This 177-nucleotide RNA was probed chemically with 2A3 and DMS. The RNA was probed in 150 mM KOAc, 10 mM MgCl2 and 150 mM bicine (pH 8.5) at 24 C. The data come from the RNA Mapping Database (RMDB), library OK2TRN.
RNA sequence: GGGAACGACUCGAGUAGAGUCGAAAACGCCUGUAAUCUCAGCUACUCGGGAGGCUGAGGUACAGAACUGCUUGAACCCGGGAGGCAGAGGUUGCAGUGAGCCGAGAUUGCGCCACUGCACUCCAUCAGAUCUCCAUUAGUUCGCUAAUGGAGAUCUAAAAGAAACAACAACAACAAC
Reactivity to 2A3 in 0.01 (KOAc 150mM, MgCl2 10mM, bicine 150mM(pH8.5), 24C), signal-to-noise 4, nucleotides 027 to 126: c060g050c030c000u020g020u110a170a280u050c000u000c000a000g000c000u050a050c010u090c130g120g020g020a060g010g000c000u000g000a000g000g000u010a000c000a000g060a100a090c050u120g070c020u060u120g070a110a120c000c000c000g030g010g000a030g000g000c030a000g030a040g070g020u160u300g010c000a000g010u010g050a050g040c010c040g100a100g040a100u070u200g020c030g010c020c000a000c000u000g000c010a150c020u000c020c010a070u180c050
Reactivity to DMS in 0.01 (KOAc 150mM, MgCl2 10mM, bicine 150mM(pH8.5), 24C), signal-to-noise 3, nucleotides 027 to 126: c130g010c170c010u000g010u000a030a030u010c000u000c000a010g000c010u000a110c050u020c110g000g010g020a240g000g000c010u000g000a000g000g010u000a000c050a010g000a130a110c140u010g010c050u000u010g010a090a180c010c000c010g010g010g010a080g000g010c040a010g020a070g010g020u000u010g010c010a010g010u010g000a120g020c020c020g010a100g010a140u020u000g000c040g000c010c010a070c010u010g000c010a070c040u000c000c030a110u000c150